RNA sequence: GGGAACGACUCGAGUAGAGUCGAAAAUCACUUUCUUAUGAUGUCAAUUUCCGGUCGACAGAUCUCAGAGCGAGAUACAGUGACCAGGAGUUCACUCUGCCUUGAGCUUCCGUCAGGUGAGCUCGGUAAUCUAUUCACCGUUCGCGGUGAAUAGAUUAAAAGAAACAACAACAACAAC
Reactivity to DMS in 0.01 (KOAc 150mM, MgCl2 10mM, bicine 150mM(pH8.5), 24C), signal-to-noise 4, nucleotides 027 to 126: u020c070a140c110u020u000u010c010u000u020a140u000g000a060u030g010u000c200a030a030u000u010u000c000c060g020g010u000c010g030a130c210a120g020a080u000c000u000c020a190g050a160g010c240g030a030g000a050u000a030c060a100g040u020g000a030c000c000a060g000g010a040g020u000u000c130a020c090u000c010u010g010c010c010u000u010g030a010g000c000u000u010c010c020g020u010c300a090g020g000u010g000a020g000c000u000c010g000g000u010
Reactivity to 2A3 in 0.01 (KOAc 150mM, MgCl2 10mM, bicine 150mM(pH8.5), 24C), signal-to-noise 8, nucleotides 027 to 126: u070c010a030c080u040u110u040c020u040u130a090u160g060a040u140g040u040c030a030a020u080u110u000c010c000g000g000u000c020g080a040c030a070g060a040u010c000u000c020a150g050a080g300c070g050a010g030a010u080a170c050a040g010u010g060a010c010c010a020g000g000a000g010u000u000c010a010c020u030c020u020g020c000c040u070u220g010a000g000c000u040u010c010c010g120u130c090a030g040g040u110g060a000g000c000u000c000g000g000u010